This 177-nucleotide RNA was probed chemically with DMS and 2A3.

RNA sequence: GGGAACGACUCGAGUAGAGUCGAAAAACUUAUAAGACGAGUACAACGUAUGGUACAUCACAAGUAUCUUAUUAGUUUUUAAGUACCAUGUGUACAUAGACUUAUGAGACGAGUACAUCGUAUGGUAAAAAUAACACCGCUUCGGCGGUGUUAUUUUAAAAGAAACAACAACAACAAC
Reactivity to DMS in 0.01 (KOAc 150mM, MgCl2 10mM, bicine 150mM(pH8.5), 24C), signal-to-noise 2, nucleotides 027 to 126: a170c000u000u010a030u000a000a010g000a040c060g020a170g000u000a020c010a070a150c200g040u070a020u000g000g000u010a000c000a020u020c170a110c180a090a080g010u010a050u010c090u000u020a090u030u020a020g010u000u000u000u070u020a060a090g000u000a020c000c000a030u010g020u000g020u000a020c000a040u050a110g000a080c020u000u000a000u000g000a010g020a110c060g000a090g000u010a020c070a050u020c050g020u000a090u000g000g010u030a000
Reactivity to 2A3 in 0.01 (KOAc 150mM, MgCl2 10mM, bicine 150mM(pH8.5), 24C), signal-to-noise 1, nucleotides 027 to 126: a000c000u010u000a000u000a020a000g100a030c020g020a000g000u000a000c040a220a030c040g200u200a040u030g100g000u000a000c000a130u100c050a020c010a010a000g070u060a130u070c020u000u040a010u000u200a010g000u000u000u000u000u040a000a000g060u000a000c000c000a010u030g030u000g000u030a000c000a000u290a000g000a000c000u040u000a110u250g010a020g000a070c010g010a030g000u000a000c020a020u020c060g080u060a010u080g080g000u070a030
Annotation: The DMS profile rests on 2,378 reads. For DMS the reverse transcriptase was MarathonRT. The 2A3 profile rests on 437 reads.